This 207-nucleotide RNA was probed chemically with 2A3. Conditions: 150 mM KOAc, 10 mM MgCl2 and 150 mM bicine (pH 8.5), 24 C. For 2A3, 441 sequencing reads were counted. As a SHAPE reagent, 2A3 marks flexible, mostly unpaired nucleotides at the ribose 2'-OH. The data come from the RNA Mapping Database (RMDB), library OK3TST.
RNA sequence: GGGAACGACUCGAGUAGAGUCGAAAAUCGUGACAUAGUGGUGCGCACGUAUGAAGCCGGAUUCUCAGAUGAUUUCUUUCCGGCUAAUUCAGUAGCUAGGUAGCCAGUCGGGAUCACGAUUUCGGUUUUCUCACCACUGGCGAGCGCUUUUGCUGCCCCGCAUCAUAGGGUUCGCCCUAUGAUGCGGAAAAGAAACAACAACAACAAC
Reactivity to 2A3 in 0.01 (KOAc 150mM, MgCl2 10mM, bicine 150mM(pH8.5), 24C), signal-to-noise 1, nucleotides 027 to 156: u000c000g010u030g030a030c000a100u120a070g130u020g060g010u040g000c050g080c050a010c070g010u100a030u120g120a070a000g000c000c000g000g000a010u260u050c160u030c240a050g110a220u170g020a100u070u300u030c070u020u070u000c010c000g010g000c010u010a010a000u080u010c030a020g020u050a020g060c050u030a030g030g180u030a030g030c010c000a100g040u150c150g040g070g130a140u090c020a000c070g060a050u080u000u040c000g010g000u000u200u000u000c020u020c030a010c050c000a000c010u000g000g000c000g040a040g000c070g000c000u100u160u050u180g010c010u010g000c010c010